[RMDB]
RNA sequence: GGGAACGACUCGAGUAGAGUCGAAAAGGAUGAUCUGGCCCCGGCCAGUUAUCCGAAUUAGUACCGGGAUUGCAUCGUCGAGCCGUCAGGGGCGAAGACGAGAACCUGAAAGCACGAAGCACCGGGCGGUGCGGGUGCGAGAUAUAACGCCCAACAAACCAUUAGGGUGAUUCGUCACCCUAAUGGUAAAAGAAACAACAACAACAAC
Reactivity to DMS in 0.01 (KOAc 150mM, MgCl2 10mM, bicine 150mM(pH8.5), 24C), signal-to-noise 1, nucleotides 027 to 156: g010g030a000u000g000a000u010c000u020g030g000c040c040c170c300g080g030c000c000a020g030u000u000a040u000c010c000g020a070a140u000u010a240g000u000a060c050c010g030g000g030a190u000u000g000c030a200u000c030g000u010c010g010a300g060c000c000g010u010c130a190g010g010g000g020c010g000a060a170g020a060c100g000a080g000a060a040c030c010u010g010a120a120a120g050c010a050c000g000a220a300g010c020a070c030c000g010g030g000c050g010g010u000g040c020g010g010g020u000g000c020g010a060g030a140u000a140u000a110a030c040g000c000c000c000a130a150c040a250a170
Reactivity to 2A3 in 0.01 (KOAc 150mM, MgCl2 10mM, bicine 150mM(pH8.5), 24C), signal-to-noise 2, nucleotides 027 to 156: g000g000a010u070g000a010u090c020u000g010g000c000c060c060c090g120g020c000c010a000g000u040u020a000u000c000c000g010a010a070u190u050a070g060u100a090c020c000g000g000g000a100u060u190g170c040a070u010c000g000u000c000g000a020g030c000c050g120u230c180a040g110g080g060g000c000g020a150a040g000a000c000g020a000g000a000a000c000c040u020g050a130a100a000g000c000a000c040g040a110a000g000c000a000c010c040g120g110g000c180g000g000u010g000c000g040g040g000u040g000c000g000a020g020a000u210a020u020a080a060c040g010c010c030c000a030a090c050a050a190
Chemical mapping of a 207-nucleotide RNA with DMS and 2A3. For 2A3, 918 sequencing reads were counted. Values cover nucleotides 27 to 156. The reactions ran in a buffer of 150 mM KOAc, 10 mM MgCl2 and 150 mM bicine (pH 8.5), at 24 C.